[RMDB]
RNA sequence: GGGAACGACUCGAGUAGAGUCGAAAAAUCGGUAAAGCGGCGGCCGUGUUGAUCAAUCCACAGAUAUGGCUGACGCGCGGCGGCUAGCAGAUGAGAGUUAGGCGCAUAGUCUGGCAGGCCGGGGCGAUUGUCAUACGGAGUUCGCUCCGUAUGACAAAAAAGAAACAACAACAACAAC
Reactivity to 2A3 in 0.01 (KOAc 150mM, MgCl2 10mM, bicine 150mM(pH8.5), 24C), signal-to-noise 1, nucleotides 027 to 126: a000u060c030g060g040u070a000a000a080g020c010g030g000c020g070g050c000c000g030u020g120u040u070g070a300u060c000a000a100u040c000c030a070c050a030g080a130u140a120u110g000g000c000u010g000a040c000g000c000g000c010g080g000c030g070g000c020u090a060g000c000a010g100a030u100g070a000g000a000g080u020u000a040g000g060c030g010c150a050u050a000g010u010c010u000g000g020c000a020g010g010c040c030g000g000g030g000c000g020a030
Reactivity to DMS in 0.01 (KOAc 150mM, MgCl2 10mM, bicine 150mM(pH8.5), 24C), signal-to-noise 2, nucleotides 027 to 126: a070u000c040g000g010u000a080a120a130g020c020g000g000c000g010g020c000c000g060u010g030u000u040g000a110u010c020a070a080u010c030c050a060c150a140g000a090u040a150u000g000g010c300u010g000a030c030g020c010g010c020g020g000c010g000g000c000u010a050g090c040a090g000a120u020g000a080g010a060g000u000u020a060g010g010c030g030c110a080u030a100g010u010c010u000g000g000c070a080g000g000c060c020g000g000g000g020c090g010a090